Conditions: 150 mM KOAc, 10 mM MgCl2 and 150 mM bicine (pH 8.5), 24 C.
This 207-nucleotide RNA was probed chemically with 2A3 and DMS.
For 2A3 the reverse transcriptase was SuperScript II with manganese.
It was measured as part of the RMDB library M2RFPK.
The 2A3 profile rests on 2,380 reads.
[RMDB]
RNA sequence: GGGAACGACUCGAGUAGAGUCGAAAAUUCCAUUUGAGUAUCCUCAAAACGGGCUUUUCAGCAUGGAACGUACAUAUUAAAUAGUAGGAGUGCAUAGUGGCCCGUAUAGCAGGCAUUAACAUUCCUGAAAACGUGAAAAGGUUCGCCUUUUCACGAAGAAUUAUCUUUUCUUCGGAAAAGAUAAUUCAAAAGAAACAACAACAACAAC
Reactivity to 2A3 in 0.01 (KOAc 150mM, MgCl2 10mM, bicine 150mM(pH8.5), 24C), signal-to-noise 3, nucleotides 027 to 156: u050u000c020c000a040u110u050u050g020a030g020u130a100u190c030c010u010c010a000a020a010a010c010g000g020g010c010u070u080u180u210c060a010g010c010a030u030g020g070a160a040c040g090u070a020c030a040u170a040u150u300a150a180a170u160a030g040u020a010g000g120a100g010u000g010c010a050u060a240g090u060g040g000c000c010c010g000u020a000u000a020g030c030a000g020g000c000a000u000u010a050a040c020a030u030u090c000c000u020g050a070a050a060a070c010g000u010g000a020a000a000a000g050g000u020u040c130g130c000c000u000u000u000u010c000a000c000g000a000a010
Reactivity to DMS in 0.01 (KOAc 150mM, MgCl2 10mM, bicine 150mM(pH8.5), 24C), signal-to-noise 2, nucleotides 027 to 156: u000u010c000c000a150u000u000u000g000a070g020u000a080u020c040c010u010c000a080a110a110a090c130g020g070g020c020u010u000u020u010c050a190g010c060a040u000g010g010a110a080c040g020u000a130c060a130u000a130u020u000a060a110a180u000a120g000u000a040g010g010a150g040u000g010c030a100u000a140g030u010g030g030c010c000c060g000u010a040u000a140g000c070a010g010g010c140a070u010u010a070a090c000a120u000u000c010c000u010g010a110a070a060a110c020g010u000g000a020a020a010a030g000g000u010u000c300g000c020c000u000u000u000u000c000a000c010g000a020a030